RNA sequence: GGGAACGACUCGAGUAGAGUCGAAAAAAGAUGCCGCAGCUCGAAAGAUUCGAACCGACUAAGUGAGCCAUGUCUAUCGCUCUGUACCUCGAAACCCAGAUUCGGAGGCUAACUUGUGCUGCUUAGCCUGUAAGGUGCCAUUCGUGGCACCUUACAGAAAAGAAACAACAACAACAAC
Reactivity to 2A3 in 0.01 (KOAc 150mM, MgCl2 10mM, bicine 150mM(pH8.5), 24C), signal-to-noise 1, nucleotides 027 to 126: a000a000g110a040u080g050c010c020g000c090a050g060c020u000c000g020a080a040a000g010a040u090u060c060g010a050a000c010c030g030a030c020u080a090a040g030u030g200a020g060c030c000a050u030g020u060c050u020a090u060c010g010c070u040c000u020g050u090a070c010c010u030c040g010a040a040a050c010c010c010a050g020a200u100u100c030g080g000a020g020g000c010u010a020a020c000u040u070g090u130g060c060u010g000c000u010u020a010g000c000
Reactivity to DMS in 0.01 (KOAc 150mM, MgCl2 10mM, bicine 150mM(pH8.5), 24C), signal-to-noise 2, nucleotides 027 to 126: a100a070g010a090u000g040c060c030g030c080a120g010c010u000c010g000a140a130a160g000a080u010u000c010g000a020a210c000c030g000a060c090u010a080a050g030u010g010a080g020c000c020a030u020g000u000c080u000a090u010c060g010c090u010c000u000g010u010a070c080c030u000c060g000a070a050a080c060c020c030a130g010a090u010u000c090g000g020a020g010g030c100u010a020a020c050u000u010g010u000g010c080u000g010c110u020u010a040g000c050